Description:
Chemical mapping of a 170-nucleotide RNA with DMS and 2A3. Conditions: 150 mM KOAc, 10 mM MgCl2 and 150 mM bicine (pH 8.5), 24 C.
RNA sequence: GGGAACGACUCGAGUAGAGUCGAAAACGAACCCGUAAGGUGAAACUUUCACAUUUAUUGGGGAGUACACUCGAGGAGUGGAAGGCGGGGAGACGGGGAUCCCGGGCUUACCCACGGGAACUGCUGGUGAGAUACUCCUUCGGGAGUAUCAAAAGAAACAACAACAACAAC
Reactivity to DMS in 0.01 (KOAc 150mM, MgCl2 10mM, bicine 150mM(pH8.5), 24C), signal-to-noise 9, nucleotides 027 to 129: c080g000a180a220c020c010c030g000u000a030a030g010g010u010g040a030a110a110c170u000u050u010c010a020c040a080u060u020u030a050u030u040g020g020g020g010a280g000u000a110c090a040c040u030c010g000a080g000g000a060g020u010g020g010a040a050g020g030c100g020g000g030g000a050g020a000c080g000g020g030g020a080u030c020c020c020g000g000g030c120u020u060a120c080c030c020a120c030g050g010g030a030a090c070u000g030c050u020g000g000u030g020a140
Reactivity to 2A3 in 0.01 (KOAc 150mM, MgCl2 10mM, bicine 150mM(pH8.5), 24C), signal-to-noise 9, nucleotides 027 to 129: c020g040a030a060c010c000c010g010u040a020a040g050g010u010g060a080a120a130c090u100u170u030c040a040c010a220u050u070u100a120u150u270g000g000g000g000a020g030u050a040c050a010c060u020c000g060a070g030g020a030g030u070g020g050a030a010g040g000c030g010g010g000g000a030g020a010c030g000g000g010g000a010u010c010c000c010g000g000g010c030u050u110a100c010c000c030a060c020g010g000g010a040a020c040u070g030c020u030g030g040u050g020a070